[RMDB]
Description:
The record gives the reactivity of an RNA of 207 nucleotides to 2A3 and DMS. Conditions: 150 mM KOAc, 10 mM MgCl2 and 150 mM bicine (pH 8.5), 24 C. Source: RMDB library OK3TST, as collected in RNAgym. High 2A3 reactivity points to a flexible backbone, as in loops and unpaired stretches.

RNA sequence: GGGAACGACUCGAGUAGAGUCGAAAAGGGUCUCACUGUGUUGUCUAGGCUAGUCUUGAAUUCCUGGCCUUAAGCAAUCCACCCAUCUCAACUUCCCAAAGCACUGGGAUUAUAGGUGUGAACCACUGGGCUGAGCCUAUUUAGUGUGUAUAUAGAAUGCAUUAUUAGCAUUCGUGCUAAUAAUGCAAAAAGAAACAACAACAACAAC
Reactivity to 2A3 in 0.01 (KOAc 150mM, MgCl2 10mM, bicine 150mM(pH8.5), 24C), signal-to-noise 3, nucleotides 027 to 156: g020g020g040u090c040u050c060a040c080u070g010u030g000u110u000g020u000c050u020a020g020g000c000u010a030g000u050c040u120u190g110a170a120u120u050c010c000u020g010g000c010c000u060u100a100a020g000c020a030a010u020c010c010a020c000c010c000a040u040c050u000c020a050a300c030u050u040c010c010c000a050a110a020g060c030a030c050u020g000g030g000a030u050u090a130u150a050g000g030u030g010u040g070a040a080c000c010a020c110u050g020g020g010c010u060g040a010g020c010c000u030a090u050u130u090a120g010u030g010u020g030u050a050u070a020u040a220g180a220a050
Reactivity to DMS in 0.01 (KOAc 150mM, MgCl2 10mM, bicine 150mM(pH8.5), 24C), signal-to-noise 2, nucleotides 027 to 156: g000g030g010u010c020u030c090a100c090u010g020u010g030u000u000g010u000c040u010a040g030g040c000u000a030g010u000c070u020u020g020a110a210u000u000c040c000u000g010g000c020c000u020u010a040a100g000c040a050a040u000c050c060a060c000c010c010a070u000c040u000c050a110a060c060u000u000c050c010c030a090a080a220g030c130a090c070u010g030g020g020a070u000u000a070u010a020g000g020u000g030u000g030a090a060c010c010a060c080u000g020g030g050c040u000g010a200g010c020c040u000a030u000u000u000a040g030u000g020u000g010u010a100u000a160u000a100g010a130a190